Chemical mapping of a 170-nucleotide RNA with 2A3 and DMS.
For 2A3 the reverse transcriptase was SuperScript II with manganese.
Reactivities are given for positions 27 through 129.
For DMS the reverse transcriptase was MarathonRT.
The data come from the RNA Mapping Database (RMDB), library 15KLIB.
High 2A3 reactivity points to a flexible backbone, as in loops and unpaired stretches.
The DMS profile rests on 8,000 reads.
[RMDB]
RNA sequence: GGGAACGACUCGAGUAGAGUCGAAAAGAUGACUUUCCCCUAUUGGUUGGGAAAAGUCCCGGAACCAGGAAAUGGGAAAGAGACGGUAGAAAAGAGCGAGCCUCCCAGUUUUCGAGUAGUCCCGGACAGCGACUCGGCUUCGGCCGAGUCAAAAGAAACAACAACAACAAC
Reactivity to 2A3 in 0.01 (KOAc 150mM, MgCl2 10mM, bicine 150mM(pH8.5), 24C), signal-to-noise 3, nucleotides 027 to 129: g030a060u070g010a010c000u000u010u000c030c000c010c010u040a140u300u130g130g000u110u030g000g030g000a000a060a120a000g130u000c000c000c040g030g060a040a030c000c000a000g010g040a000a040a030u130g020g000g000a030a010a000g090a010g000a000c020g010g050u060a050g110a060a130a070a000g100a010g030c050g010a000g010c000c000u000c000c010c010a030g030u000u000u010u140c010g000a010g030u040a000g000u040c000c000c000g010g060a020c010a010g010c030
Reactivity to DMS in 0.01 (KOAc 150mM, MgCl2 10mM, bicine 150mM(pH8.5), 24C), signal-to-noise 3, nucleotides 027 to 129: g010a030u020g000a060c020u000u030u020c000c000c020c000u020a120u050u020g030g010u050u040g010g040g000a040a080a100a070g010u000c000c000c000g060g020a140a060c060c030a050g000g000a060a040a030u040g000g020g020a050a000a070g020a100g000a090c100g030g040u070a060g000a090a070a110a050g000a120g020c160g000a120g000c040c020u020c070c030c020a200g000u030u010u080u010c050g060a000g000u040a070g010u030c000c040c000g000g010a070c070a150g000c200